[RMDB]
RNA sequence: GGGAACGACUCGAGUAGAGUCGAAAAGGAGUGUCAUGAUAUGGAGACUUCGUGUUCCUUGUCUAGCUCUGUGUUUCCUAGUCUACUUAAUCGUAGGCUAGAAAAGGAUGUGUGUUCGCACACAUCCGGUUUUAUUAUACUUCGGUAUAAUAAAACCAAAAGAAACAACAACAACAAC
Reactivity to 2A3 in 0.01 (KOAc 150mM, MgCl2 10mM, bicine 150mM(pH8.5), 24C), signal-to-noise 3, nucleotides 027 to 126: g020g010a010g010u060g130u190c090a080u160g100a050u070a050u300g040g010a040g030a040c000u090u060c190g080u090g030u070u020c010c000u010u040g030u010c030u030a030g000c010u000c020u050g060u020g000u070u020u000c010c000u000a000g000u000c000u010a010c010u030u120a050a040u100c030g000u000a000g000g000c000u000a010g000a010a090a010a000g010g000a000u010g000u000g010u010g010u040u090c250g000c080a000c000a000c010a010u000c010c000
Reactivity to DMS in 0.01 (KOAc 150mM, MgCl2 10mM, bicine 150mM(pH8.5), 24C), signal-to-noise 8, nucleotides 027 to 126: g000g000a010g020u000g010u010c130a090u000g010a070u010a060u000g000g010a040g010a020c010u010u010c220g000u010g010u010u000c000c000u000u000g010u000c030u000a190g010c030u000c030u000g010u000g010u000u000u000c020c000u000a010g010u000c000u000a000c000u010u000a120a110u010c250g000u000a000g010g000c000u000a010g000a030a050a090a080g010g000a010u000g020u010g020u000g000u010u010c230g020c010a000c000a010c000a000u000c000c000

Chemical mapping of a 177-nucleotide RNA with 2A3 and DMS. For 2A3, 8,001 sequencing reads were counted. The RNA was probed in 150 mM KOAc, 10 mM MgCl2 and 150 mM bicine (pH 8.5) at 24 C. It was measured as part of the RMDB library RFMREP.